[RMDB]
RNA sequence: GGGAACGACUCGAGUAGAGUCGAAAAAAAAGAUAUGGACCCAUCGCUUCUUGGAUUUACAGAGGAAGUCAUAUCGGAAACGAUAUGACGCUCUGUUGUCAGAAGGUGAUGGGUCCUAAGUCAAAAACAUAUAGUUUGAGUUCGCUCAAACUAUAUGAAAAGAAACAACAACAACAAC
Reactivity to DMS in 0.01 (KOAc 150mM, MgCl2 10mM, bicine 150mM(pH8.5), 24C), signal-to-noise 5, nucleotides 027 to 126: a070a050a090a090g000a020u000a300u000g000g000a010c000c000c000a010u000c010g030c000u000u000c020u000u000g030g000a010u020u020u000a000c010a010g000a020g010g010a130a110g010u000c000a000u000a010u000c000g000g000a170a080a200c010g010a000u000a000u000g000a020c000g000c000u000c000u000g000u010u000g000u000c000a010g010a020a020g000g020u000g010a010u000g010g010g010u010c000c000u000a010a060g010u010c020a070a080a090a130a180
Reactivity to 2A3 in 0.01 (KOAc 150mM, MgCl2 10mM, bicine 150mM(pH8.5), 24C), signal-to-noise 4, nucleotides 027 to 126: a000a000a010a050g070a050u110a040u100g000g000a000c000c020c000a000u000c000g030c030u030u030c030u120u210g240g000a150u300u300u040a010c020a010g020a010g070g130a300a050g020u020c010a000u000a010u010c000g000g010a120a070a020c000g010a010u010a000u030g010a000c000g020c000u000c000u000g010u010u000g000u000c000a010g010a050a010g140g070u100g010a000u000g000g020g000u000c000c000u000a000a000g000u000c000a000a000a010a030a030